This 177-nucleotide RNA was probed chemically with DMS and 2A3.
DMS adducts were read by reverse transcription with MarathonRT.
For 2A3 the reverse transcriptase was SuperScript II with manganese.
It was measured as part of the RMDB library OK1LIB.
For 2A3, 32,937 sequencing reads were counted.
RNA sequence: GGGAACGACUCGAGUAGAGUCGAAAAACAUUUUAACUACUGUGGACAACGUUUGAUACAGUUGAAUGUCAAUAUUUGUCUCCACUACAUUAGCACUACUGUUCGCGGCACCACCACCAUUCAUCGGAGUCCUAUAAUUAUUCGUAAUUAUAGGACUAAAAGAAACAACAACAACAAC
Reactivity to DMS in 0.01 (KOAc 150mM, MgCl2 10mM, bicine 150mM(pH8.5), 24C), signal-to-noise 9, nucleotides 027 to 126: a090c080a070u020u020u020u020a050a110c120u010a060c120u010g010u010g000g000a080c060a020a040c110g010u010u010u010g010a110u020a040c090a120g010u020u030g000a110a170u010g000u010c030a030a020u010a140u030u010u010g010u010c050u010c050c020a040c060u010a070c150a070u010u000a040g010c060a050c060u000a060c070u010g010u010u000c070g010c050g010g000c020a040c020c010a040c020c020a050c030c030a040u020u020c070a050u010c090g000g000
Reactivity to 2A3 in 0.01 (KOAc 150mM, MgCl2 10mM, bicine 150mM(pH8.5), 24C), signal-to-noise 9, nucleotides 027 to 126: a000c050a040u130u140u130u200a110a060c070u150a020c050u090g010u050g050g030a020c010a060a030c090g050u030u070u110g080a090u090a060c050a100g070u080u090g200a190a100u090g020u050c040a050a030u030a110u120u060u060g050u010c030u010c030c010a020c030u070a020c020a100u080u130a030g020c030a010c050u090a030c020u080g030u110u070c040g000c020g050g000c010a010c010c010a010c010c010a010c000c010a040u070u100c020a040u070c050g080g020